RNA sequence: GGGAACGACUCGAGUAGAGUCGAAAAUGUGUCUUUAUGAUCUCAUCGUUCUGGUGGACCAUAAUCAGACGCACGGUAUACUUCGUUUCUGUUGGAGAAUAUUGGGAGUCUUUUAAUGUGAUGAGUGACACUUCAUUAUUUUCGAAUAAUGAAGUGUAAAAGAAACAACAACAACAAC
Reactivity to DMS in 0.01 (KOAc 150mM, MgCl2 10mM, bicine 150mM(pH8.5), 24C), signal-to-noise 9, nucleotides 027 to 126: u010g020u010g010u000c010u000u000u000a020u010g000a040u000c010u020c010a010u000c010g020u020u020c140u040g030g040u000g000g000a030c050c010a010u000a010a020u020c170a020g010a020c010g010c020a030c090g010g010u000a080u010a070c050u010u010c030g010u000u000u010c060u000g010u010u010g000g010a070g000a100a060u010a070u010u010g010g010g010a090g000u000c030u000u010u000u000a040a090u010g010u010g010a070u010g000a090g010u010g010
Reactivity to 2A3 in 0.01 (KOAc 150mM, MgCl2 10mM, bicine 150mM(pH8.5), 24C), signal-to-noise 9, nucleotides 027 to 126: u050g010u000g000u000c000u010u040u010a040u030g030a020u010c170u030c090a020u010c020g250u300u100c120u300g030g010u020g000g010a010c000c000a010u040a040a020u110c090a000g000a010c000g000c020a010c020g020g000u050a050u020a100c030u030u050c030g080u040u080u020c080u110g200u130u120g040g010a060g020a110a090u080a100u140u060g030g030g030a040g030u010c040u050u170u050u110a130a100u130g040u050g060a080u040g030a020g070u090g030
An RNA of 177 nucleotides, treated with DMS and 2A3 and read out base by base. The reactions ran in a buffer of 150 mM KOAc, 10 mM MgCl2 and 150 mM bicine (pH 8.5), at 24 C.